[RMDB]
RNA sequence: GGGAACGACUCGAGUAGAGUCGAAAAUGAAGUUCCAGAUUGUUCAUCUAGAGGCAGAGACAUCUCUUUUAAAAAAGUGCCAGAUGCCCCAGUGCCAGAGCUGCGAACGUGAACACAGUGGAAGGCAAGCAAAGUAUACGUUCGCGUAUACUUUGCUAAAAGAAACAACAACAACAAC
Reactivity to 2A3 in 0.01 (KOAc 150mM, MgCl2 10mM, bicine 150mM(pH8.5), 24C), signal-to-noise 4, nucleotides 027 to 126: u160g060a050a030g050u050u000c010c000a000g030a140u090u070g040u090u040c030a090u030c110u130a110g030a110g140g030c060a010g010a020g040a160c030a190u010c010u000c030u000u100u080u190a100a170a000a000a000a000g100u090g030c010c010a020g020a080u080g060c010c000c020c000a080g030u080g060c060c020a050g020a040g010c040u030g000c000g110a080a030c070g120u090g050a060a000c060a000c030a040g030u030g110g070a060a030g030g000c090a020
Reactivity to DMS in 0.01 (KOAc 150mM, MgCl2 10mM, bicine 150mM(pH8.5), 24C), signal-to-noise 4, nucleotides 027 to 126: u050g030a160a120g010u010u000c000c000a100g000a160u000u010g000u010u010c080a080u000c040u030a070g030a170g000g010c050a030g000a170g000a090c070a060u050c030u000c040u000u000u020u040a000a070a050a140a050a030g010u010g010c020c020a030g010a110u000g020c040c000c030c030a090g000u000g040c040c020a040g000a180g000c020u020g020c100g000a040a030c060g010u000g000a030a090c060a090c040a050g070u000g000g030a270a060g000g000c080a110